[RMDB]
RNA sequence: GGGAACGACUCGAGUAGAGUCGAAAAGCUGAAUGAAGUAGGGCAAAGUGCAUUGUCGUUACACGGCGAUCUGGAGCAACGCGAUCGCGAUCAGACUCUGGUACGUUUUGCUAACGGUAGCGCCCGAUAUGACGCAUACGUUCGCGUAUGCGUCAUAAAAAGAAACAACAACAACAAC
Reactivity to 2A3 in 0.01 (KOAc 150mM, MgCl2 10mM, bicine 150mM(pH8.5), 24C), signal-to-noise 2, nucleotides 027 to 126: g030c020u100g070a100a070u130g030a110a040g050u100a060g000g010g050c030a080a030a040g110u100g050c010a060u040u080g000u010c010g020u030u020a050c070a000c050g040g000c010g000a070u000c010u040g040g010a050g030c040a080a020c030g000c030g140a180u130c150g000c000g020a070u100c050a030g090a180c000u000c010u010g000g050u040a060c050g020u000u010u030u070g020c030u040a060a010c000g060g000u010a020g000c010g030c040c000c030g000a020
Reactivity to DMS in 0.01 (KOAc 150mM, MgCl2 10mM, bicine 150mM(pH8.5), 24C), signal-to-noise 3, nucleotides 027 to 126: g020c030u030g000a100a090u020g000a060a100g020u000a090g000g000g040c040a060a030a110g030u010g000c030a080u010u010g010u000c010g000u000u000a090c130a070c090g010g000c000g010a250u000c010u010g000g000a060g010c110a130a120c070g010c050g000a110u010c120g010c030g000a090u000c180a110g010a090c040u000c020u000g000g030u000a160c010g000u000u000u000u010g010c190u010a030a030c070g000g010u000a020g000c040g020c020c000c010g000a170

Annotation: Structure probing data (2A3 and DMS) for a 177-nucleotide construct. The DMS profile rests on 2,562 reads. The data come from the RNA Mapping Database (RMDB), library OK2TST.